[RMDB]
RNA sequence: GGGAACGACUCGAGUAGAGUCGAAAAUUCAGGGCUAGGAUUCGGGGGCGAGAUCCUAGGCAGACCGGCUGACAGUCGGCAUUUGAUAAUGUCAAGCCCCAAAUCAGCAACAGACACCGGCCAACUGGGCCAGUCCCAUAUUCGUAUGGGACUGGCCAAAAGAAACAACAACAACAAC
Reactivity to 2A3 in 0.01 (KOAc 150mM, MgCl2 10mM, bicine 150mM(pH8.5), 24C), signal-to-noise 1, nucleotides 027 to 126: u240u130c120a000g030g000g120c000u000a000g070g000a000u190u070c050g000g010g000g000g000c000g000a010g000a040u000c000c000u010a020g000g010c000a000g060a130c010c000g030g010c070u140g100a050c010a100g000u040c000g040g000c010a010u050u070u130g200a140u210a050a030u040g090u140c000a000a130g000c000c040c000c000a000a000a000u120c050a000g070c010a000a020c000a040g170a000c000a000c090c000g000g020c000c030a040a020c060u130g000